[RMDB]
RNA sequence: GGGAACGACUCGAGUAGAGUCGAAAAGAAAGAUUGCCAGACACGGUUGAUCUCACCCUCCGGGGGGGCUAUAGAGAUCGCUGGAAGCACUACCGGACAACCGGAACAUUGCAGAAAUGCAGCCCAAGCAGAAGUAAUGAUUCGUCAUUACUUCUGCAAAAGAAACAACAACAACAAC
Reactivity to 2A3 in 0.01 (KOAc 150mM, MgCl2 10mM, bicine 150mM(pH8.5), 24C), signal-to-noise 9, nucleotides 027 to 126: g100a010a090a000g090a100u110u110g030c030c020a050g050a090c040a010c120g060g050u230u300g020a010u000c000u000c010a050c010c010c020u040c110c140g070g000g020g000g000g010g000c040u100a080u090a160g010a000g000a010u010c010g000c010u020g010g050a040a010g020c020a020c050u080a060c020c000g020g020a060c050a150a190c030c000g000g030a030a030c040a040u070u140g000c010a000g040a060a060a010u040g000c010a010g010c000c000c010a030a020
Reactivity to DMS in 0.01 (KOAc 150mM, MgCl2 10mM, bicine 150mM(pH8.5), 24C), signal-to-noise 6, nucleotides 027 to 126: g010a120a120a070g010a090u020u020g000c020c030a100g010a130c190a220c070g010g000u000u020g010a010u000c000u020c020a130c040c010c020u000c080c130g020g030g020g000g000g000g010c150u010a150u040a100g000a040g010a020u000c020g000c000u010g000g010a160a180g020c060a050c120u000a090c020c000g010g000a180c260a110a100c010c030g010g000a060a060c130a090u030u000g000c040a020g000a070a080a090u000g010c030a040g000c010c010c020a070a140
Record summary: This 177-nucleotide RNA was probed chemically with 2A3 and DMS. The RNA was probed in 150 mM KOAc, 10 mM MgCl2 and 150 mM bicine (pH 8.5) at 24 C. 2A3 adducts were read by reverse transcription with SuperScript II with manganese. It was measured as part of the RMDB libraries RFM100 and RFMREP.